RNA sequence: GGGAACGACUCGAGUAGAGUCGAAAAUCAGUGCUCAGGCGUGGGAGUUCGAAGAUCACCCUCAAGUACAGGAAGGAGUGGAGUAGUGUCCGUCUUCUCCUGGGACAGUCCUGAGAGAUGGGCAGCAGCCACCGAUAUAUUUCGAUAUAUCGGUGGCAAAAGAAACAACAACAACAAC
Reactivity to 2A3 in 0.01 (KOAc 150mM, MgCl2 10mM, bicine 150mM(pH8.5), 24C), signal-to-noise 2, nucleotides 027 to 126: u100c020a010g090u060g130c010u030c010a020g080g000c030g000u040g020g010g000a060g000u090u100c110g140a140a070g030a080u070c030a110c010c010c010u050c080a070a120g070u060a090c030a010g020g030a110a060g000g030a050g010u050g010g030a020g030u160a030g010u020g140u030c000c020g070u000c010u080u000c000u030c010c000u030g010g000g010a030c050a030g070u060c000c000u000g000a010g000a000g020a070u110g000g030g060c050a050g000c030a020
Reactivity to DMS in 0.01 (KOAc 150mM, MgCl2 10mM, bicine 150mM(pH8.5), 24C), signal-to-noise 4, nucleotides 027 to 126: u000c060a100g000u000g010c020u010c030a040g010g020c090g000u010g000g000g010a070g030u000u000c090g010a170a120g010a030u000c050a090c020c010c000u000c090a120a120g010u000a060c030a010g000g000a060a050g010g010a040g030u010g000g000a040g000u000a190g020u000g010u000c010c000g010u010c000u000u010c040u000c010c030u000g000g000g010a060c060a160g000u010c000c000u000g000a020g000a080g010a050u000g020g010g000c070a090g000c160a100